[RMDB]
RNA sequence: GGGAACGACUCGAGUAGAGUCGAAAAGAAACUCGUUUCGCGUUGGCUGCUUAAUUCAAGGAAUUAGCGUGCCUUCAUGCUAAGGGUUUGAUAUCUGCUAAAACCCGGUGCAUUCAUCAAUGCAGGUCUCAUCCAAAUGCCUUCGGGCAUUUGGAAAUACUGCAACAUUAUUCGUAAUGUUGCAGUAAAAAGAAACAACAACAACAAC
Reactivity to DMS in 0.01 (KOAc 150mM, MgCl2 10mM, bicine 150mM(pH8.5), 24C), signal-to-noise 2, nucleotides 027 to 156: g010a130a090a050c030u010c060g020u000u010u010c040g030c010g020u010u000g010g040c040u000g000c020u000u020a050a060u000u000c020a140a170g040g010a080a090u000u000a040g010c060g000u000g000c050c010u000u000c020a030u000g040c030u000a300a220g000g020g020u000u000u010g000a140u000a070u000c050u010g000c070u000a120a020a010a060c010c000c020g000g080u010g020c020a050u010u000c050a080u000c110a060a140u000g010c000a040g000g020u020c080u010c050a220u000c000c000a010a010a030u000g030c000c000u000u000c300g080g020g030c000a000u000u000u000g010g000a010a020a070
Reactivity to 2A3 in 0.01 (KOAc 150mM, MgCl2 10mM, bicine 150mM(pH8.5), 24C), signal-to-noise 4, nucleotides 027 to 156: g060a020a070a010c020u020c040g050u030u070u050c100g030c010g030u010u010g020g000c020u040g020c030u140u290a030a010u050u050c150a240a140g190g040a080a030u000u010a010g010c050g040u040g020c010c010u030u030c030a040u040g010c010u010a020a040g000g010g010u000u000u000g010a000u010a030u050c020u000g000c020u010a030a020a000a020c010c000c010g020g040u050g020c040a090u090u190c020a050u060c090a160a120u210g000c000a000g030g050u000c020u050c080a060u010c000c010a010a000a000u010g010c010c000u030u050c150g030g000g000c000a000u000u000u000g000g000a000a000a000
This 207-nucleotide RNA was probed chemically with DMS and 2A3. The 2A3 profile rests on 2,800 reads.